[RMDB]
RNA sequence: GGGAACGACUCGAGUAGAGUCGAAAAGGGUGUGUGGAACUUCCGGUGGAGCGGUGAAAUGUGUUGAUAUCGGAAGGAACGCCGGUGGCGAAAGCGACACGCUGGGGCCUGUCUGACGCUGAGGCACGUUUACGUGCCUGUUCGCAGGCACGUAAACAAAAGAAACAACAACAACAAC
Reactivity to DMS in 0.01 (KOAc 150mM, MgCl2 10mM, bicine 150mM(pH8.5), 24C), signal-to-noise 5, nucleotides 027 to 126: g000g020g030u000g010u010g020u010g000g010a160a150c020u000u000c010c010g000g020u000g010g010a050g010c020g000g010u010g020a080a130a100u020g000u000g000u000u000g010a100u010a030u000c020g000g000a030a030g010g000a070a090c100g010c030c040g010g020u000g010g000c020g010a070a080a090g010c050g000a090c100a060c120g010c050u010g000g000g010g010c040c020u000g000u000c030u000g010a100c080g010c060u010g000a110g010g010c080a060c170
Reactivity to 2A3 in 0.01 (KOAc 150mM, MgCl2 10mM, bicine 150mM(pH8.5), 24C), signal-to-noise 3, nucleotides 027 to 126: g070g010g000u050g000u020g020u060g090g030a070a060c000u020u000c010c010g010g000u010g000g020a010g000c040g000g030u070g100a070a090a020u110g010u010g070u300u060g050a030u020a000u050c010g010g000a010a010g030g010a040a020c030g020c010c010g000g040u050g010g000c030g050a110a050a010g050c030g050a030c030a010c100g000c020u040g010g000g070g000c030c000u020g010u020c040u030g030a030c020g010c040u030g020a050g060g000c040a020c130

Conditions: 150 mM KOAc, 10 mM MgCl2 and 150 mM bicine (pH 8.5), 24 C. An RNA of 177 nucleotides, treated with DMS and 2A3 and read out base by base. 2A3 adducts were read by reverse transcription with SuperScript II with manganese. The data come from the RNA Mapping Database (RMDB), library RFMREP.